[RMDB]
RNA sequence: GGGAACGACUCGAGUAGAGUCGAAAACAUUUUUUAUGUAGGGCUCGAUCAGUGGGCGUAAGCUCAGGUCGAUUGCUCUAGUGGUUUGGUUUGUGACCUGGUUGCUCGCUGAGAGUUGAACCAUUAGCUAAAUAAUUUUUUUCGAAAAAUUAUUUAGAAAAGAAACAACAACAACAAC
Reactivity to DMS in 0.01 (KOAc 150mM, MgCl2 10mM, bicine 150mM(pH8.5), 24C), signal-to-noise 1, nucleotides 027 to 126: c020a010u000u000u070u030u030u030a030u030g010u000a000g000g000g030c010u000c000g010a030u000c010a130g020u030g020g000g020c000g030u020a060a110g000c030u000c010a070g000g010u000c000g010a050u020u040g010c010u000c000u000a020g000u020g010g020u020u000u020g000g020u030u020u030g020u000g010a080c080c070u020g000g000u020u010g000c020u000c010g000c250u010g000a190g010a000g020u000u020g010a020a050c000c000a060u000u010a050g000
This 177-nucleotide RNA was probed chemically with DMS. The reactions ran in a buffer of 150 mM KOAc, 10 mM MgCl2 and 150 mM bicine (pH 8.5), at 24 C.